[RMDB]
RNA sequence: GGGAACGACUCGAGUAGAGUCGAAAAGAAACAACUGAAGCUUCAACGCCUUUUUUUCCAAUCUUCAUUAGCACCGGGCUAGGGAGUAAGCCCGUGGAACCUUAGUUUUGUUCCCUCGGGACUUACUUGUGGUUCCUGUGGUGCACUCCUGACCCUGACGGAUAGAUAUGUUCGCAUAUCUAUCCGUAAAAGAAACAACAACAACAAC
Reactivity to 2A3 in 0.01 (KOAc 150mM, MgCl2 10mM, bicine 150mM(pH8.5), 24C), signal-to-noise 5, nucleotides 027 to 156: g050a010a070a010c040a010a030c050u120g060a120a010g020c020u160u140c120a100a040c090g010c010c020u070u040u040u040u010u070u080c080c030a110a160u060c060u200u080c080a150u150u160a040g050c070a030c110c030g020g010g000c040u080a070g050g010g000a010g000u050a090a000g000c020c000c020g030u030g010g000a010a000c000c000u030u010a030g030u050u100u080u170g060u130u060c020c000c010u070c110g060g000g010a010c000u010u010a010c000u020u040g090u080g090g000u010u030c010c000u030g130u220g020g030u090g000c040a010c000u000c000c000u030g060a080c010c010c000u010g040
Reactivity to DMS in 0.01 (KOAc 150mM, MgCl2 10mM, bicine 150mM(pH8.5), 24C), signal-to-noise 1, nucleotides 027 to 156: g020a180a060a130c050a060a230c050u010g000a100a160g010c040u000u000c050a090a100c070g020c010c000u000u000u000u030u000u030u000c010c000a020a160u000c060u000u000c080a160u000u000a100g090c060a100c070c060g030g020g030c000u000a100g060g000g010a030g050u000a040a270g030c000c000c000g100u000g000g000a000a020c010c020u000u010a040g000u000u000u000u000g000u000u000c020c010c080u010c290g060g000g010a050c000u000u000a010c030u010u000g000u030g010g020u010u000c000c020u030g010u000g040g050u000g020c220a090c010u000c000c020u000g000a110c140c000c000u000g020